[RMDB]
RNA sequence: GGGAACGACUCGAGUAGAGUCGAAAAGGGGUCCGACGUGGUGAAAGACAUGAAGCUACCUGAAGCCUCCACGGGUAGACUUCAACAGCUUUCACGUAACAUCGUCGGACGGAGGCACCCAAAGAAAAUGAUUGGUCUUCGGACCAAUCAUUUUCAAGUCCAGUGAAAAGUUCGCUUUUCACUGGACAAAAGAAACAACAACAACAAC
Reactivity to 2A3 in 0.01 (KOAc 150mM, MgCl2 10mM, bicine 150mM(pH8.5), 24C), signal-to-noise 2, nucleotides 027 to 156: g230g010g020g000u000c010c000g000a000c000g010u000g000g010u000g030a010a010a000g060a040c120a090u000g010a010a000g010c000u000a000c000c000u010g000a190a060g010c020c000u050c040c000a020c020g000g010g010u050a060g040a300c000u000u010c000a030a060c040a090g050c000u000u000u020c000a010c000g010u010a000a000c010a180u180c000g000u020c020g000g020a000c000g000g000a010g000g000c020a010c000c000c000a070a150a050g000a000a020a000a000u000g000a000u000u000g020g010u010c020u050u080c300g010g000a000c000c000a000a000u000c000a000u000u010u010u000c000a000a000